[RMDB]
RNA sequence: GGGAACGACUCGAGUAGAGUCGAAAAAGCAAUUGGGAAGAAGUCCCGUUCUGCUCCCACCACUUCAACAAGCUGUACCUCAAGGAUGGGAGAUCCAUUGUGGUCCCUUGCCGCCACCAAGAUGAACGGCAUGGAGCACGUUCGCGUGCUCCAUGCCAAAAGAAACAACAACAACAAC
Reactivity to 2A3 in 0.01 (KOAc 150mM, MgCl2 10mM, bicine 150mM(pH8.5), 24C), signal-to-noise 1, nucleotides 027 to 126: a000g090c050a180a000u300u260g020g000g000a090a200g040a180a060g200u000c000c000c000g020u010u120c000u030g030c000u040c010c000c000a000c000c000a100c000u140u060c000a010a010c060a000a080g020c000u040g000u020a020c000c000u000c020a000a110g010g010a060u040g000g050g000a110g000a000u000c000c050a200u040u300g030u070g220g020u000c000c000c000u000u130g020c000c080g020c010c000a040c020c020a060a000g000a040u300g000a100a000c000

Chemical mapping of a 177-nucleotide RNA with 2A3.
It was measured as part of the RMDB library OK1LIB.
2A3 adducts were read by reverse transcription with SuperScript II with manganese.
The RNA was probed in 150 mM KOAc, 10 mM MgCl2 and 150 mM bicine (pH 8.5) at 24 C.
As a SHAPE reagent, 2A3 marks flexible, mostly unpaired nucleotides at the ribose 2'-OH.